[RMDB]
This 177-nucleotide RNA was probed chemically with 2A3 and DMS. 2A3 adducts were read by reverse transcription with SuperScript II with manganese. For DMS the reverse transcriptase was MarathonRT. It was measured as part of the RMDB library OK1LIB. Conditions: 150 mM KOAc, 10 mM MgCl2 and 150 mM bicine (pH 8.5), 24 C. Reactivities are given for positions 27 through 126.
RNA sequence: GGGAACGACUCGAGUAGAGUCGAAAAGAAAGAAAAGGUGCCAUAAGCUUAGAUCUUUCCCUGCUAGUGUAGAUCGAGGCAAACACAAUUGUGCUACACUCGCAGAGCACAUAAUGGCACCAAAGAAGGUAAUAUCGACUUUCGAGUCGAUAUUACCAAAAGAAACAACAACAACAAC
Reactivity to 2A3 in 0.01 (KOAc 150mM, MgCl2 10mM, bicine 150mM(pH8.5), 24C), signal-to-noise 5, nucleotides 027 to 126: g010a010a020a000g130a010a090a000a040g010g000u000g000c000c010a020u060a100a100g020c030u040u080a040g000a140u070c020u010u020u020c020c000c000u010g030c000u030a040g020u010g000u050a030g000a070u150c130g060a090g120g040c000a040a050a020c090a010c030a120a160u080u030g000u050g020c000u030a000c020a030c020u040c040g030c040a000g020a000g050c030a040c000a070u200a050a020u040g010g000c010a010c000c000a010a010a000g090a060a040
Reactivity to DMS in 0.01 (KOAc 150mM, MgCl2 10mM, bicine 150mM(pH8.5), 24C), signal-to-noise 4, nucleotides 027 to 126: g000a030a100a060g000a040a060a080a140g000g020u000g030c000c020a020u000a060a170g020c060u000u010a120g000a030u010c000u000u010u000c000c030c000u010g000c030u010a010g010u020g050u020a020g010a090u000c070g000a150g010g000c020a090a090a090c170a070c250a200a120u010u000g010u000g010c000u010a020c040a050c010u010c150g010c050a090g030a030g020c010a020c070a030u030a060a050u000g000g010c000a000c000c020a010a030a030g010a210a050